[RMDB]
Source information: Chemical mapping of a 177-nucleotide RNA with DMS and 2A3. The RNA was probed in 150 mM KOAc, 10 mM MgCl2 and 150 mM bicine (pH 8.5) at 24 C. It was measured as part of the RMDB library OK2TRN.
RNA sequence: GGGAACGACUCGAGUAGAGUCGAAAAUUCGCUUGGCUUGAGGACUUCAUGAAUGAAUAUGCACCAAGUGAUCUGUCAUACACUGCAUAUUACAAAGACCUCUGCAAAUACAAUCGUGGCAAGCACGCCUUCAGUACCCGUUCGCGGGUACUGAAGGAAAAGAAACAACAACAACAAC
Reactivity to DMS in 0.01 (KOAc 150mM, MgCl2 10mM, bicine 150mM(pH8.5), 24C), signal-to-noise 1, nucleotides 027 to 126: u000u010c100g030c060u000u030g000g000c060u010u000g020a010g040g020a050c110u000u000c120a200u000g030a150a130u010g040a040a000u010a030u050g010c020a050c050c110a020a180g010u000g020a000u000c110u020g000u000c040a060u000a050c190a180c300u010g040c040a030u000a010u010u000a050c040a070a070a010g000a050c040c040u000c020u000g070c040a030a030a070u000a060c150a110a070u010c060g040u000g050g000c130a050a040g010c010a070c120g000
Reactivity to 2A3 in 0.01 (KOAc 150mM, MgCl2 10mM, bicine 150mM(pH8.5), 24C), signal-to-noise 1, nucleotides 027 to 126: u090u000c030g020c000u020u040g030g010c010u060u050g060a010g000g000a060c010u090u070c200a200u130g200a160a010u120g000a050a000u120a000u000g020c000a010c040c010a090a090g040u000g030a060u010c100u240g290u040c020a040u060a100c020a030c020u020g000c050a010u000a020u020u050a160c020a040a130a010g020a050c010c010u000c030u000g000c010a060a080a080u110a030c030a000a150u130c000g080u030g050g060c000a040a020g120c010a060c070g060